[RMDB]
RNA sequence: GGGAACGACUCGAGUAGAGUCGAAAAGAUAUGGACGUGCGUCAGAGAAGUACUCGGAAACGAGUAUACUUCGACGAAGACGGUACGUCCUAAGUCAAACGAUUUAAAGCCUUCGGGCUUUAAAUCGCCAGAUAAGCACGUUCGCGUGCUUAUCUGGAAAAGAAACAACAACAACAAC
Reactivity to 2A3 in 0.01 (KOAc 150mM, MgCl2 10mM, bicine 150mM(pH8.5), 24C), signal-to-noise 1, nucleotides 027 to 126: g030a000u020a020u100g000g000a010c010g000u010g030c000g000u020c010a000g020a000g020a210a000g040u010a010c010u000c000g000g000a010a000a000c000g010a010g020u010a020u020a020c020u000u020c020g080a120c110g140a050a030g000a000c060g040g050u090a000c010g000u000c000c000u000a010a000g020u000c060a250a000a120c020g000a000u000u010u010a000a010a010g010c020c000u070u090c300g140g000g000c000u010u020u000a000a000a000u020c000g000
Reactivity to DMS in 0.01 (KOAc 150mM, MgCl2 10mM, bicine 150mM(pH8.5), 24C), signal-to-noise 2, nucleotides 027 to 126: g000a000u000a180u000g000g010a020c000g020u000g020c010g010u000c010a100g010a100g020a010a000g010u000a000c000u000c010g000g000a050a020a080c000g000a010g000u000a070u010a060c000u000u000c000g010a240c180g040a190a230g000a010c000g020g010u010a000c000g000u000c000c000u000a000a080g010u010c020a110a110a300c030g010a010u000u000u000a010a010a010g000c000c000u000u010c260g040g020g000c000u020u010u000a000a000a000u000c000g000